The record gives the reactivity of an RNA of 207 nucleotides to DMS and 2A3.
For 2A3, 2,158 sequencing reads were counted.
2A3 adducts were read by reverse transcription with SuperScript II with manganese.
Reactivities are given for positions 27 through 156.
DMS adducts were read by reverse transcription with MarathonRT.
The RNA was probed in 150 mM KOAc, 10 mM MgCl2 and 150 mM bicine (pH 8.5) at 24 C.
For DMS, 4,985 sequencing reads were counted.
[RMDB]
RNA sequence: GGGAACGACUCGAGUAGAGUCGAAAAUAUCAAGCUGAUCCGUUCUUCCUGUCCGUUUAGGAUCAGCGAGGGACAGGAUGACCUCUCCGAGAGGAGUAAAAUGGUCUGUGCGACGACGUAUGACCGGACCGCUUAGUCGUCGCUUAGGUCCGGGAGAAGUAAAUGCAUCAUUCGUGAUGCAUUUACUAAAAGAAACAACAACAACAAC
Reactivity to DMS in 0.01 (KOAc 150mM, MgCl2 10mM, bicine 150mM(pH8.5), 24C), signal-to-noise 2, nucleotides 027 to 156: u000a090u000c030a040a110g010c020u010g000a050u000c000c010g010u000u000c020u000u000c010c000u010g020u000c010c030g000u000u000u000a150g000g030a020u000c020a000g020c070g030a040g010g020g000a100c020a130g000g000a050u010g000a080c050c000u010c010u010c010c020g000a300g030a290g030g000a060g010u010a020a120a080a150u000g030g010u000c020u000g020u000g000c000g000a120c000g020a050c000g010u000a090u000g010a140c030c000g010g010a110c040c090g020c090u000u010a110g020u010c010g000u000c010g010c020u000u000a040g050g000u000c000c000g020g000g000a140g010a100
Reactivity to 2A3 in 0.01 (KOAc 150mM, MgCl2 10mM, bicine 150mM(pH8.5), 24C), signal-to-noise 3, nucleotides 027 to 156: u210a040u090c030a060a020g060c050u050g030a010u020c010c010g040u070u040c020u070u030c000c010u040g010u010c020c030g060u080u210u270a120g010g000a060u080c060a010g000c030g010a040g030g000g000a010c060a090g000g000a070u090g010a000c000c010u020c000u000c000c010g040a060g000a010g090g030a020g010u150a000a060a050a080u170g010g000u020c020u040g040u030g010c010g040a010c000g010a000c060g160u170a060u180g100a080c070c000g040g040a040c000c000g040c070u030u070a010g010u090c010g020u010c010g000c000u000u080a030g000g000u000c000c000g000g040g010a120g050a080